The record gives the reactivity of an RNA of 177 nucleotides to 2A3 and DMS. The 2A3 profile rests on 7,385 reads. Values cover nucleotides 27 to 126. Conditions: 150 mM KOAc, 10 mM MgCl2 and 150 mM bicine (pH 8.5), 24 C. The data come from the RNA Mapping Database (RMDB), library OK1LIB. DMS adducts were read by reverse transcription with MarathonRT.
RNA sequence: GGGAACGACUCGAGUAGAGUCGAAAAGACGCCUGUGUGGCGAAACGAGCAAUGGUAUAAGCCGCAAUAGAAGAUGAGAUGGAAGCGGCAAGAUAGAAUGCUCGCAACAAGAUCCAUCUCACAGAGACCCUAGGUAUAGGUUCGCCUAUACCUAGGGAAAAGAAACAACAACAACAAC
Reactivity to 2A3 in 0.01 (KOAc 150mM, MgCl2 10mM, bicine 150mM(pH8.5), 24C), signal-to-noise 6, nucleotides 027 to 126: g100a020c040g030c010c010u180g080u150g110u250g160g020c020g030a080a020a010c010g000a000g050c010a040a150u150g150g030u170a110u100a130a050g000c000c000g000c000a010a110u120a180g130a150a020g060a160u070g000a000g000a000u000g000g000a120a010g000c000g000g000c000a000a000g070a010u140a040g140a150a110u120g000c050u080c050g010c040a000a170c030a050a050g030a080u010c000c000a000u000c000u020c000a010c010a010g160a010g040a050
Reactivity to DMS in 0.01 (KOAc 150mM, MgCl2 10mM, bicine 150mM(pH8.5), 24C), signal-to-noise 4, nucleotides 027 to 126: g010a140c090g010c030c000u010g030u020g030u050g000g030c010g000a060a140a130c020g000a020g000c070a080a100u040g030g000u040a070u000a080a190g000c000c000g010c010a160a080u030a110g020a100a080g050a140u000g000a000g000a010u000g000g000a040a180g010c000g000g000c000a000a020g000a150u040a150g000a120a090u010g000c000u020c000g020c090a100a090c210a100a100g010a120u000c000c010a020u000c020u000c000a010c050a170g000a120g000a210